[RMDB]
RNA sequence: GGGAACGACUCGAGUAGAGUCGAAAAAUGCCGACCCGAAGAGGAAAGGAGGACACGGACGACAAACCGUGAGUUCUAUUGCCCUUUAUUGUUGGGUGCACCCUGGGACCCAGUAAUGCCCGGGGGGGAGGGAUGGCGUUCGCGCCAUCCAAAAGAAACAACAACAACAAC
Reactivity to DMS in 0.01 (KOAc 150mM, MgCl2 10mM, bicine 150mM(pH8.5), 24C), signal-to-noise 5, nucleotides 027 to 129: a030u030g040c050c050g060a090c070c040c050g040a060a100g000a130g030g030a090a020a100g010g030a140g000g000a070c050a060c090g030g000a110c080g040a010c230a040a050a070c070c040g000u040g030a150g020u070u020c070u020a090u080u010g010c060c010c010u000u070u030a060u070u030g040u000u030g000g000g000u020g010c080a080c030c030c010u050g020g000g010a060c040c070c030a050g000u090a000a000u080g050c010c030c010g000g000g000g000g000g000g000a090g020
Reactivity to 2A3 in 0.01 (KOAc 150mM, MgCl2 10mM, bicine 150mM(pH8.5), 24C), signal-to-noise 3, nucleotides 027 to 129: a000u070g000c000c000g020a060c010c030c000g010a020a000g020a020g010g000a010a000a050g030g000a010g000g010a010c010a000c010g040g010a010c040g040a020c150a070a090a030c000c000g030u050g060a040g070u040u050c030u000a110u050u120g040c020c000c000u040u070u080a160u070u090g070u000u020g000g030g000u030g010c040a100c020c020c000u000g000g020g000a020c000c010c020a010g030u110a060a030u180g040c010c020c000g020g000g010g000g000g000g010a030g000
Background
Chemical mapping of a 170-nucleotide RNA with DMS and 2A3. The RNA was probed in 150 mM KOAc, 10 mM MgCl2 and 150 mM bicine (pH 8.5) at 24 C.